[RMDB]
RNA sequence: GGGAACGACUCGAGUAGAGUCGAAAAGACGAAGAUAGCGAAAGCUAGAAAAGAUCCGUGGCUAAAGAGGAAACUGAAGAGAGCUGCUCGGCUGAGAAGCCGUGCCACGGAAGCAGCUCCAAGAGAAACUGAUAUGAGGCUUCGGCCUCAUAUCAGUAAAAGAAACAACAACAACAAC
Reactivity to 2A3 in 0.01 (KOAc 150mM, MgCl2 10mM, bicine 150mM(pH8.5), 24C), signal-to-noise 2, nucleotides 027 to 126: g080a000c090g030a040a130g060a110u040a000g010c010g030a010a100a010g030c020u050a010g060a000a160a000a000g020a010u040c010c010g000u000g000g000c080u090a040a110a060g100a070g020g090a090a150a220c100u140g100a200a020g100a030g000a000g060c000u010g000c000u000c070g000g000c000u020g010a000g030a040a000g000c000c000g000u000g040c000c000a010c000g000g000a010a010g000c010a000g000c000u000c000c000a040a060g070a040g020a150a220
Reactivity to DMS in 0.01 (KOAc 150mM, MgCl2 10mM, bicine 150mM(pH8.5), 24C), signal-to-noise 2, nucleotides 027 to 126: g020a150c090g020a200a200g020a180u020a000g000c000g010a080a210a190g040c000u000a000g060a200a160a130a030g000a060u000c050c000g000u000g000g000c030u010a070a120a140g000a160g000g000a020a060a040c160u040g000a110a140g000a250g000a000g000c000u000g020c000u000c000g030g000c000u000g030a210g000a100a020g010c000c010g040u010g030c000c000a000c000g060g000a010a010g000c030a010g000c000u010c030c040a160a040g010a250g000a040a070
Chemical mapping of a 177-nucleotide RNA with 2A3 and DMS. The reactions ran in a buffer of 150 mM KOAc, 10 mM MgCl2 and 150 mM bicine (pH 8.5), at 24 C. For DMS the reverse transcriptase was MarathonRT.